[RMDB]
RNA sequence: GGGAACGACUCGAGUAGAGUCGAAAAAUGUAGCUACAGGAUUGCCUGAGAUUGGUUGCUACGAUAUAGGAGUAGAUGACACACUUAAAUUCAUUGGAUCGACAGCAGAUCAACAAAUAUGCGAUCUAGAAUUUGUUUACCGUGAUCCAUACACAUAGUUAUCCUGAAGGUUCGCCUUCAGGAUAACAAAAGAAACAACAACAACAAC
Reactivity to 2A3 in 0.01 (KOAc 150mM, MgCl2 10mM, bicine 150mM(pH8.5), 24C), signal-to-noise 3, nucleotides 027 to 156: a010u060g000u010a000g000c010u060a000c020a050g070g100a140u050u190g070c000c000u120g020a100g000a050u110u150g090g020u020u070g000c000u020a010c020g030a010u100a000u030a050g010g090a070g050u080a020g010a100u080g050a010c000a000c000a010c060u090u130a000a130a060u150u110c060a080u110u130g020g000a000u000c040g100a090c110a010g030c040a020g040a070u150c050a020a050c030a020a120a040u180a060u130g080c070g020a000u000c010u020a080g040a080a030u070u060u100g090u050u110u040a190c080c050g000u000g030a030u000c000c000a010u030a040c030a000c020a070u080a020
Reactivity to DMS in 0.01 (KOAc 150mM, MgCl2 10mM, bicine 150mM(pH8.5), 24C), signal-to-noise 2, nucleotides 027 to 156: a070u000g020u000a030g000c030u000a250c040a100g000g020a280u000u000g000c020c080u000g000a140g000a100u000u000g010g000u000u010g000c010u000a080c070g000a150u000a120u010a090g000g010a150g010u000a090g000a110u000g040a130c000a060c070a080c070u000u000a070a120a130u000u000c060a090u000u020g030g020a060u000c020g030a100c070a070g000c040a040g030a100u000c040a050a090c050a060a050a050u000a100u000g010c080g010a100u020c050u000a110g000a030a060u000u000u000g020u010u020u000a060c030c030g010u000g000a050u000c000c020a090u000a040c080a030c040a150u000a100

Chemical mapping of a 207-nucleotide RNA with 2A3 and DMS. The RNA was probed in 150 mM KOAc, 10 mM MgCl2 and 150 mM bicine (pH 8.5) at 24 C. For DMS, 2,516 sequencing reads were counted.